Structure probing data (2A3 and DMS) for a 177-nucleotide construct.
The DMS profile rests on 10,051 reads.
For DMS the reverse transcriptase was MarathonRT.
It was measured as part of the RMDB library OK2TST.

RNA sequence: GGGAACGACUCGAGUAGAGUCGAAAAAGGAGCCUGCAUUUCACCAGGAGUCUCUGUGAUUAUGAACGAGGUAGGCACAGGAUCACGCCUUGGGAAACACUGAUCUUGACUGUCAGAGCUUGACAAGGAUAAAAUUGGGAUUCGUCCCAAUUUUAUCAAAAGAAACAACAACAACAAC
Reactivity to 2A3 in 0.01 (KOAc 150mM, MgCl2 10mM, bicine 150mM(pH8.5), 24C), signal-to-noise 6, nucleotides 027 to 126: a010g090g000a020g050c010c010u020g010c060a100u060u040u090c080a090c060c020a010g050g020a050g070u010c050u010c030u090g050u030g040a080u050u170a080u170g060a100a040c090g020a050g100g060u060a020g070g000c020a010c010a020g020g020a030u050c010a000c100g030c000c020u070u060g030g000g020a010a040a000c030a020c030u030g010a040u040c000u050u090g040a070c030u030g010u040c010a030g020a050g220c040u050u040g000a030c020a070a030g090
Reactivity to DMS in 0.01 (KOAc 150mM, MgCl2 10mM, bicine 150mM(pH8.5), 24C), signal-to-noise 8, nucleotides 027 to 126: a110g010g000a110g010c040c010u000g010c090a150u000u010u010c060a100c090c040a070g010g010a130g000u000c050u010c030u000g010u000g000a080u010u000a060u010g000a080a120c130g010a070g000g010u000a040g000g000c040a110c050a040g000g000a040u000c060a060c150g010c050c030u000u000g010g000g000a160a070a060c090a090c070u000g000a060u000c040u000u000g010a150c120u000g000u000c020a050g010a170g010c090u000u010g010a070c110a060a090g010